[RMDB]
The record gives the reactivity of an RNA of 177 nucleotides to 2A3 and DMS. The 2A3 profile rests on 6,520 reads. Conditions: 150 mM KOAc, 10 mM MgCl2 and 150 mM bicine (pH 8.5), 24 C. The DMS profile rests on 3,360 reads.
RNA sequence: GGGAACGACUCGAGUAGAGUCGAAAAGAUAUGGAGAAGAGGGAGCGGAUACAGGGCACAUCGGAAACGAUAGCCCUGUAAUCGCGAGGAUCUCUUCUCCUAAGUCAAAGGACCGUUCGCGGUCCAACUUUGGAACAAUGUUCGCAUUGUUCCAAAGAAAAGAAACAACAACAACAAC
Reactivity to 2A3 in 0.01 (KOAc 150mM, MgCl2 10mM, bicine 150mM(pH8.5), 24C), signal-to-noise 2, nucleotides 027 to 126: g010a010u070a030u140g010g000a000g010a010a000g000a000g010g020g000a020g000c030g000g020a000u010a020c000a000g010g010g000c040a100c030a290u010c010g020g000a060a070a010c000g000a000u020a020g000c000c000c000u010g000u010a010a010u010c010g000c010g060a090g000g000a000u000c000u010c000u000u000c000u020c000c000u010a010a020g010u000c010a040a080a230g010g000a000c010c000g000u080u090c300g000c010g100g000u000c000c000a000a020
Reactivity to DMS in 0.01 (KOAc 150mM, MgCl2 10mM, bicine 150mM(pH8.5), 24C), signal-to-noise 3, nucleotides 027 to 126: g000a050u000a300u000g010g000a010g000a020a010g000a020g000g000g010a040g020c010g010g000a040u000a010c000a020g000g010g010c000a110c250a090u010c010g000g000a100a080a160c000g010a020u010a120g000c000c000c000u000g000u000a000a020u000c000g020c000g000a030g020g000a040u010c000u000c000u010u000c000u000c000c010u000a000a080g020u000c040a110a120a150g010g000a030c000c010g020u000u010c150g000c010g020g000u000c000c000a020a020